[RMDB]
Overview
The record gives the reactivity of an RNA of 177 nucleotides to 2A3 and DMS. For 2A3, 4,037 sequencing reads were counted. For DMS the reverse transcriptase was MarathonRT. Conditions: 150 mM KOAc, 10 mM MgCl2 and 150 mM bicine (pH 8.5), 24 C. Values cover nucleotides 27 to 126.

RNA sequence: GGGAACGACUCGAGUAGAGUCGAAAAGCCUAACAGUUCGCUGUUAGGCAAAUGCACAGACUUCGCAAGUGUGAAAAACACAACAGAAGUGUCUAUGCGAGGAUCGUUGCGUCUUCGGACGCAACAAUCAUGGUAUGCCAUUCGUGGCAUACCAUGAAAAAGAAACAACAACAACAAC
Reactivity to 2A3 in 0.01 (KOAc 150mM, MgCl2 10mM, bicine 150mM(pH8.5), 24C), signal-to-noise 3, nucleotides 027 to 126: g010c010c000u000a010a000c000a020g050u090u130c170g070c130u000g000u010u000a010g010g020c000a040a010a000u070g000c000a010c010a010g040a020c010u010u000c020g000c110a160a170g010u000g000u020g100a130a050a040a060a040c020a020c010a090a030c030a040g030a040a010g070u040g040u110c010u030a030u010g000c020g060a070g130g060a120u120c100g000u000u010g000c000g000u000c000u030u070c230g060g000a010c000g010c010a010a000c000a000a010
Reactivity to DMS in 0.01 (KOAc 150mM, MgCl2 10mM, bicine 150mM(pH8.5), 24C), signal-to-noise 4, nucleotides 027 to 126: g000c010c000u000a010a010c000a000g000u000u010c250g020c000u000g010u010u000a000g000g020c000a010a030a030u010g020c010a010c060a010g010a050c000u000u000c010g000c250a180a130g010u000g010u000g000a090a030a120a120a010c010a000c010a100a190c210a180g000a020a010g020u010g030u010c000u000a120u000g000c000g010a140g010g000a080u010c150g000u000u000g010c000g010u000c010u000u000c160g030g010a010c000g010c000a000a000c000a040a050